[RMDB]
RNA sequence: GGGAACGACUCGAGUAGAGUCGAAAAGAUAUGGACGUGGUGGAGCGCGAACUGUAUUCGGAAACGAAUAUGAAAUCCGAACUACGCUCGCACGUCCUAAGUCAAAAUCUGAACUUCGGUUCAGAAAGUAAGCUCACAAGUUCGCUUGUGAGCUUACAAAAGAAACAACAACAACAAC
Reactivity to DMS in 0.01 (KOAc 150mM, MgCl2 10mM, bicine 150mM(pH8.5), 24C), signal-to-noise 1, nucleotides 027 to 126: g000a040u000a150u010g060g000a000c010g020u010g000g020u020g020g030a040g020c010g020c060g010a050a070c170u020g000u010a040u000u010c010g060g000a030a070a090c080g010a010a010u020a050u000g010a090a160a100u000c090c090g000a100a070c120u000a240c000g000c020u000c000g000c000a010c000g000u000c000c000u000a000a010g000u000c010a090a060a130a110u000c000u000g000a030a010c000u000u020c220g030g000u010u000c000a000g000a040a030a120
Reactivity to 2A3 in 0.01 (KOAc 150mM, MgCl2 10mM, bicine 150mM(pH8.5), 24C), signal-to-noise 2, nucleotides 027 to 126: g000a000u040a000u130g020g010a000c000g010u040g050g300u210g290g140a020g000c140g000c020g080a040a000c030u080g010u040a020u000u000c000g040g000a010a040a040c030g000a040a050u050a020u080g110a110a090a030u080c080c010g030a170a150c120u120a060c170g000c010u000c010g010c000a000c000g000u000c000c000u020a000a000g000u000c010a000a000a000a300u000c000u000g000a000a000c000u000u060c160g090g000u010u010c010a010g010a030a000a010
An RNA of 177 nucleotides, treated with DMS and 2A3 and read out base by base. The reactions ran in a buffer of 150 mM KOAc, 10 mM MgCl2 and 150 mM bicine (pH 8.5), at 24 C. DMS adducts were read by reverse transcription with MarathonRT. The DMS profile rests on 1,063 reads. The 2A3 profile rests on 2,007 reads.